[RMDB]
RNA sequence: GGGAACGACUCGAGUAGAGUCGAAAAGAAAAGUGCACUUGUAGCACAUACAAGAAAAGAAAAGGUCAUGUGUAGACCAGACACAUAAAGAAAAGAGCAGUUGCAGCUCAUGCAACAAAAAGAAAAAGGGAUUCUAUUACUUCGGUAAUAGAAUCCCAAAAGAAACAACAACAACAAC
Reactivity to 2A3 in 0.01 (KOAc 150mM, MgCl2 10mM, bicine 150mM(pH8.5), 24C), signal-to-noise 1, nucleotides 027 to 126: g070a020a120a030a010g030u020g000c000a020c090u060u020g000u000a000g000c090a000c050a090u080a000c000a050a050g140a110a100a000a000g220a030a130a000a010g060g010u050c070a050u050g050u000g050u140a030g100a000c000c000a000g000a000c000a000c010a000u190a000a130a030g100a060a130a060a000g040a080g000c080a000g000u000u000g040c010a000g000c010u020c120a020u030g130c000a000a000c020a040a130a000a000a000g200a020a130a000a000a000